[RMDB]
An RNA of 177 nucleotides, treated with 2A3 and DMS and read out base by base. The RNA was probed in 150 mM KOAc, 10 mM MgCl2 and 150 mM bicine (pH 8.5) at 24 C. The data come from the RNA Mapping Database (RMDB), libraries RFM100 and RFMREP.
RNA sequence: GGGAACGACUCGAGUAGAGUCGAAAAAGGGGUGGAACAUAGAUGUUUGAAACAAACGUGUAAAAAUAAAUGAAAUGUUGAUAACUUAGUUAAUGACCUAGAGACUGGUAGCUUGUUCAGGAACCUCCAAUUAGGGCCAUUUCGAUGGCCCUAAUUGAAAAGAAACAACAACAACAAC
Reactivity to 2A3 in 0.01 (KOAc 150mM, MgCl2 10mM, bicine 150mM(pH8.5), 24C), signal-to-noise 2, nucleotides 027 to 126: a000g000g000g000g000u030g050g000a000a000c020a020u230a000g090a120u130g020u000u100u170g050a050a030a000c010a070a040a000c070g010u020g020u190a010a040a030a050a190u100a080a070a010u080g080a000a070a090u120g030u030u000g010a110u020a030a000c010u030u010a030g050u050u080a130a050u110g050a000c030c010u150a140g000a000g010a140c060u090g000g010u000a050g070c020u000u000g030u020u020c020a000g000g060a000a000c020c000u040c000
Reactivity to DMS in 0.01 (KOAc 150mM, MgCl2 10mM, bicine 150mM(pH8.5), 24C), signal-to-noise 4, nucleotides 027 to 126: a060g050g000g000g040u010g000g000a040a030c040a070u000a050g030a070u010g000u000u010u000g000a190a070a050c050a040a060a200c110g020u020g000u010a020a080a100a070a090u020a060a060a120u040g000a090a100a060u010g000u000u000g000a080u000a030a030c020u000u000a060g000u010u010a050a080u000g010a060c020c010u000a050g010a110g000a080c090u000g010g000u010a040g020c090u000u000g010u000u010c050a010g010g010a030a040c020c010u000c050
High 2A3 reactivity points to a flexible backbone, as in loops and unpaired stretches.